RNA sequence: GGGAACGACUCGAGUAGAGUCGAAAACACAAUUCUCUAAGCGAUGAGAAGCGUGUGGAAAAUUAGGGAGGGGCUACGGCUAUAAUCCUAAGAAAGCUUAUCUACAAGCGGAGGUAUUCUCAGAACGAAAACCAUUUGGCGUUCGCGCCAAAUGGAACAACAACAGUAGCUUCGGCUACUGUUGUUGAAAAGAAACAACAACAACAAC
Reactivity to DMS in 0.01 (KOAc 150mM, MgCl2 10mM, bicine 150mM(pH8.5), 24C), signal-to-noise 1, nucleotides 027 to 156: c030a080c020a020a270u000u000c000u010c010u000a130a220g030c170g000a300u040g000a020g000a020a060g050c170g060u000g030u010g000g000a110a040a080a170u000u020a090g010g040g020a110g020g010g040g020c000u020a080c090g080g050c070u000a070u000a070a050u000c030c000u010a100a060g000a010a170a240g020c010u000u000a110u010c080u010a050c040a020a100g020c070g020g000a080g000g010u000a040u010u010c000u000c010a140g000a100a070c060g000a150a070a100a140c030c000a000u000u000u020g020g070c030g000u000u000c300g060c050g000c000c000a040a000a000u020g000g030a010a020
Reactivity to 2A3 in 0.01 (KOAc 150mM, MgCl2 10mM, bicine 150mM(pH8.5), 24C), signal-to-noise 2, nucleotides 027 to 156: c020a000c010a030a080u060u010c000u000c020u060a240a170g170c090g150a100u120g000a100g000a030a000g040c030g010u020g020u070g000g050a120a140a040a100u110u070a070g050g000g020a060g000g100g000g000c000u050a010c070g040g000c000u030a020u080a260a020u100c030c040u060a070a010g070a070a080a000g020c010u070u020a030u060c020u060a080c060a130a010g000c070g040g030a060g010g040u060a070u120u030c050u050c060a060g060a130a060c040g100a080a060a030a060c010c000a010u030u000u000g000g000c020g000u030u050c230g030c010g000c080c010a000a000a000u000g000g000a000a000

The data come from the RNA Mapping Database (RMDB), library M2RFPK. An RNA of 207 nucleotides, treated with DMS and 2A3 and read out base by base. The DMS profile rests on 1,448 reads. Reactivities are given for positions 27 through 156.